The record gives the reactivity of an RNA of 177 nucleotides to DMS and 2A3. Conditions: 150 mM KOAc, 10 mM MgCl2 and 150 mM bicine (pH 8.5), 24 C. 2A3 adducts were read by reverse transcription with SuperScript II with manganese. It was measured as part of the RMDB library OK2TST. For DMS, 4,088 sequencing reads were counted.
[RMDB]
RNA sequence: GGGAACGACUCGAGUAGAGUCGAAAACGUGGUCGGCCCGCAGCUCAAGCUGCACCAGUGCGGUCUGCCCAAGCUGAUGGCGCUGGAGCUGUUCAAGCCGUUCGUGAUGAAGCGGCUGGUGGACCUCUGUACCAUGGGAUUUCGAUCCCAUGGUACAAAAAGAAACAACAACAACAAC
Reactivity to DMS in 0.01 (KOAc 150mM, MgCl2 10mM, bicine 150mM(pH8.5), 24C), signal-to-noise 4, nucleotides 027 to 126: c090g010u000g000g010u010c010g020g010c020c020c300g000c020a010g000c000u000c020a050a020g010c000u010g030c010a010c030c010a020g000u010g010c300g000g000u010c170u010g000c160c010c030a080a300g000c000u000g000a020u010g020g020c050g010c010u000g000g010a020g000c000u000g000u000u010c120a090a060g000c000c010g010u000u000c040g020u000g000a160u010g010a100a040g000c010g000g020c000u000g000g020u000g030g010a040c000c000u000c040
Reactivity to 2A3 in 0.01 (KOAc 150mM, MgCl2 10mM, bicine 150mM(pH8.5), 24C), signal-to-noise 3, nucleotides 027 to 126: c030g050u040g010g000u010c020g100g000c000c020c030g000c010a000g000c000u010c030a040a040g000c050u120g010c120a010c000c000a010g020u020g030c040g050g020u080c200u210g120c050c000c000a010a000g000c000u000g000a040u110g100g060c030g000c020u020g030g000a000g030c000u000g020u060u030c060a040a000g020c000c000g020u010u010c040g070u160g120a240u230g030a080a000g040c010g030g000c010u030g010g030u060g060g000a000c000c010u010c050